[RMDB]
RNA sequence: GGGAACGACUCGAGUAGAGUCGAAAAGAAGGAAUACAAUGGAGUAGAGGAUGGAGAAUUGUCUGAAGAUGGUUUGAAGGACUAUAAUAAGGAUAAUUAUUUUGACUUCACCGAUGAUAAUGAAGAACCCACUAUAAUGCUUCGGCAUUAUAGUGGGAAAAGAAACAACAACAACAAC
Reactivity to 2A3 in 0.01 (KOAc 150mM, MgCl2 10mM, bicine 150mM(pH8.5), 24C), signal-to-noise 3, nucleotides 027 to 126: g080a000a010g120g050a070a030u080a060c060a050a110u120g050g000a050g020u100a010g040a030g040g010a080u050g010g020a040g040a110a040u080u080g040u010c020u070g010a040a050g030a040u190g040g010u110u070u100g080a060a000g050g050a020c070u100a060u040a250a000u050a040a060g060g030a040u090a300a060u110u050a040u000u040u050u140g040a050c010u000u000c030a020c080c020g000a060u250g010a030u130a140a000u080g060a050a070g020a020a040
Reactivity to DMS in 0.01 (KOAc 150mM, MgCl2 10mM, bicine 150mM(pH8.5), 24C), signal-to-noise 3, nucleotides 027 to 126: g000a110a060g000g020a050a050u010a070c160a060a030u030g000g010a120g000u000a050g020a120g010g000a060u000g000g020a000g040a080a010u020u050g040u010c040u040g010a100a110g000a080u020g000g010u020u050u020g030a070a060g000g000a080c030u020a040u020a030a050u010a070a090g010g020a080u020a050a030u000u010a010u000u000u010u010g000a140c020u000u000c010a040c030c070g000a130u050g000a070u010a050a040u000g010a050a130g040a100a140
Annotation:
An RNA of 177 nucleotides, treated with 2A3 and DMS and read out base by base. Conditions: 150 mM KOAc, 10 mM MgCl2 and 150 mM bicine (pH 8.5), 24 C. It was measured as part of the RMDB library OK1LIB.